This 207-nucleotide RNA was probed chemically with 2A3. Reactivities are given for positions 27 through 156. For 2A3, 1,497 sequencing reads were counted. 2A3 adducts were read by reverse transcription with SuperScript II with manganese. The RNA was probed in 150 mM KOAc, 10 mM MgCl2 and 150 mM bicine (pH 8.5) at 24 C.

RNA sequence: GGGAACGACUCGAGUAGAGUCGAAAAGAAAGAAAGCAAGAAGCCCUGCCUGGGGGCUGCCGCAAGGCGCUAUCAGGACGUGGAUUAGUCGGGCAGUGCCACGGUUCGAGAAAACCCCGACAGCCAAAAAACACACCCUCGUUCGCGAGGGUGUGAAGGAUAUCUUACUGUUCGCAGUAAGAUAUCCAAAAGAAACAACAACAACAAC
Reactivity to 2A3 in 0.01 (KOAc 150mM, MgCl2 10mM, bicine 150mM(pH8.5), 24C), signal-to-noise 1, nucleotides 027 to 156: g040a010a070a000g040a060a090a030g030c090a030a110g190a170a010g220c000c000c010u000g020c000c010u010g000g030g000g050g000c010u070g000c000c000g030c050a030a050g000g000c000g000c010u030a010u100c000a000g000g000a000c000g000u010g010g000a020u020u000a020g000u010c000g000g010g030c140a080g020u020g010c000c000a000c000g050g040u070u090c070g030a020g050a090a010a010a010c000c000c000c010g000a000c000a010g080c060c030a070a020a070a100a090a000c000a010c000a000c000c000c000u020c000g020u060u060c110g020c010g130a000g010g010g000u000g000u000g000a000a000